Structure probing data (DMS and 2A3) for a 177-nucleotide construct.
[RMDB]
RNA sequence: GGGAACGACUCGAGUAGAGUCGAAAAGAUAUGGAUCAUCUGAUGGUGAGCAACAGCUCGGAAACGAGACAUGCUCUCAUCUGAUCCUAAGUCAAAACCCGGAAUCCUGUUCGCAGGAUUCCGGGAAGAUACCCAUCAAGUUCGCUUGAUGGGUAUCAAAAGAAACAACAACAACAAC
Reactivity to DMS in 0.01 (KOAc 150mM, MgCl2 10mM, bicine 150mM(pH8.5), 24C), signal-to-noise 3, nucleotides 027 to 126: g020a060u000a300u000g020g010a010u000c000a090u020c210u000g020a000u000g020g000u000g000a010g000c010a030a070c300a150g000c000u000c000g010g000a090a080a190c010g000a000g020a040c060a210u010g000c000u000c000u000c000a000u000c010u000g000a020u010c010c000u010a030a100g000u010c040a080a060a080a160c010c000c000g000g010a020a000u010c000c000u010g000u000u020c210g010c000a030g020g000a020u000u000c010c010g010g000g000a000a010
Reactivity to 2A3 in 0.01 (KOAc 150mM, MgCl2 10mM, bicine 150mM(pH8.5), 24C), signal-to-noise 3, nucleotides 027 to 126: g010a010u050a030u140g000g010a010u020c010a020u040c130u210g020a010u030g000g260u240g040a000g000c020a020a110c050a180g040c010u000c000g020g000a090a090a030c010g000a000g050a040c030a060u060g000c000u000c000u000c000a000u000c000u010g000a000u000c000c000u010a140a010g020u030c030a010a030a140a280c000c010c000g000g000a000a000u020c000c000u050g060u130u140c300g030c100a010g010g000a000u010u010c000c000g000g000g000a000a000

The 2A3 profile rests on 6,384 reads. Conditions: 150 mM KOAc, 10 mM MgCl2 and 150 mM bicine (pH 8.5), 24 C. DMS adducts were read by reverse transcription with MarathonRT. For DMS, 2,329 sequencing reads were counted.